This 207-nucleotide RNA was probed chemically with 2A3 and DMS. The reactions ran in a buffer of 150 mM KOAc, 10 mM MgCl2 and 150 mM bicine (pH 8.5), at 24 C. For 2A3, 3,774 sequencing reads were counted.
RNA sequence: GGGAACGACUCGAGUAGAGUCGAAAAGCCAACUGAAGCCUGUUCAGAGAUACAACCAUUUAUUUAGGUAACAGGAUCAGGAGAGCCCAAACCUAUGUGGAUAUGCAGAUCUGAAUGAGACAAGAUUGAGACUGCCCUGGAACAGAGCACAAGAACAAGCUGAUAAUGGAUUCGUCCAUUAUCAGCUAAAAGAAACAACAACAACAAC
Reactivity to 2A3 in 0.01 (KOAc 150mM, MgCl2 10mM, bicine 150mM(pH8.5), 24C), signal-to-noise 5, nucleotides 027 to 156: g010c010c020a000a000c010u020g020a150a020g080c020c000u010g020u020u030c060a050g060a020g040a130u110a210c080a090a070c030c020a060u070u230u130a180u080u170u150a150g020g020u000a010a020c000a010g000g000a010u020c010a010g040g040a060g020a010g050c000c000c010a050a050a070c030c030u070a090u120g060u060g010g030a040u040a040u230g020c020a010g020a210u020c020u060g060a090a050u100g030a070g050a130c060a110a050g030a120u030u100g010a030g000a050c020u040g030c020c030c020u020g030g000a040a010c020a020g050a030g070c020a030c010a040a030g110a090a030c050a090
Reactivity to DMS in 0.01 (KOAc 150mM, MgCl2 10mM, bicine 150mM(pH8.5), 24C), signal-to-noise 2, nucleotides 027 to 156: g000c030c010a160a280c060u000g000a070a140g030c000c020u000g010u000u010c060a190g020a100g000a200u000a030c050a100a170c060c070a040u000u000u000a110u010u000u010a040g000g000u000a100a040c080a030g040g000a300u000c020a070g050g020a180g020a110g000c000c000c030a020a180a130c040c080u010a060u000g050u010g020g000a060u010a090u010g050c010a060g000a120u000c040u000g010a080a010u010g010a090g020a060c060a000a080g010a120u000u010g010a130g000a130c030u000g000c020c020c010u030g010g060a130a180c070a030g000a080g030c030a070c090a040a190g010a040a100c070a050
The data come from the RNA Mapping Database (RMDB), library OK3TST.